[RMDB]
RNA sequence: GGGAACGACUCGAGUAGAGUCGAAAAAGCAACGAGUGUGUGUGGGACGUUUUAUCCCAAGCUCUGAGUAGAGCACGCGCUCACACACACCGCGAGCGAGCAUCAGCAGUGCGCAAACGCUGGUAAAGAGGGAAGUGAAAUUCGUUUCACUUCCCUCAAAAGAAACAACAACAACAAC
Reactivity to 2A3 in 0.01 (KOAc 150mM, MgCl2 10mM, bicine 150mM(pH8.5), 24C), signal-to-noise 3, nucleotides 027 to 126: a010g080c070a080a020c040g020a100g080u020g010u010g010u010g000u010g020g000g050a050c000g000u000u080u170u210a150u100c030c030c000a030a000g020c010u030c020u100g280a240g160u300a010g190a000g000c020a010c030g020c010g020c000u000c000a000c010a000c020a000c010a000c010c020g070c010g010a000g000c050g010a040g020c020a060u050c000a010g040c010a010g080u020g070c080g020c110a060a110a000c040g010c020u030g000g080u140a070a120a030
Reactivity to DMS in 0.01 (KOAc 150mM, MgCl2 10mM, bicine 150mM(pH8.5), 24C), signal-to-noise 4, nucleotides 027 to 126: a100g020c010a280a040c020g000a230g030u010g020u000g010u000g020u000g010g000g010a070c010g000u010u000u010u000a150u020c030c020c020a050a080g020c010u000c000u000g010a220g020u000a050g000a010g010c020a100c090g000c060g010c010u010c000a010c000a010c000a010c010a010c020c010g010c020g000a160g000c040g010a100g010c070a030u000c040a030g020c020a080g020u000g000c080g010c130a060a110a150c070g010c010u000g010g000u000a040a080a090